[RMDB]
RNA sequence: GGGAACGACUCGAGUAGAGUCGAAAAUCUCUGUGAUGUCAUUCACUAAUGCUUUUACACUGGGUGACUCCUUCUAACAUCACCACAAUCUUCCAGUUCUAUGGAGAAUGCACUGAUUAGUUAUGGAUUCUAAAACGAGCUUCGGCUCGUUUUAGAAAAAAGAAACAACAACAACAAC
Reactivity to DMS in 0.01 (KOAc 150mM, MgCl2 10mM, bicine 150mM(pH8.5), 24C), signal-to-noise 3, nucleotides 027 to 126: u020c010u010c030u020g040u010g000a100u000g000u020c050a060u010u000c040a050c120u000a150a080u020g000c100u000u010u010u010a070c120a120c130u000g020g040g000u000g010a070c060u000c040c010u010u030c080u000a050a030c060a020u010c080a010c230c060a060c240a110a140u000c010u030u000c000c020a070g020u000u010c160u020a170u010g000g010a030g020a060a050u000g000c080a100c110u010g000a070u000u000a060g030u000u000a050u020g000g000a280
Reactivity to 2A3 in 0.01 (KOAc 150mM, MgCl2 10mM, bicine 150mM(pH8.5), 24C), signal-to-noise 2, nucleotides 027 to 126: u010c010u000c040u050g070u030g080a050u050g110u090c000a010u000u040c000a020c070u030a150a000u140g050c040u050u070u020u210a020c020a020c070u100g050g000g000u010g000a010c000u030c000c000u030u120c020u060a050a000c000a080u050c010a030c130c000a050c000a040a020u000c030u050u010c040c000a000g020u100u180c000u080a130u100g020g010a040g010a000a040u070g000c040a000c060u030g010a020u040u090a010g010u000u000a110u070g050g040a000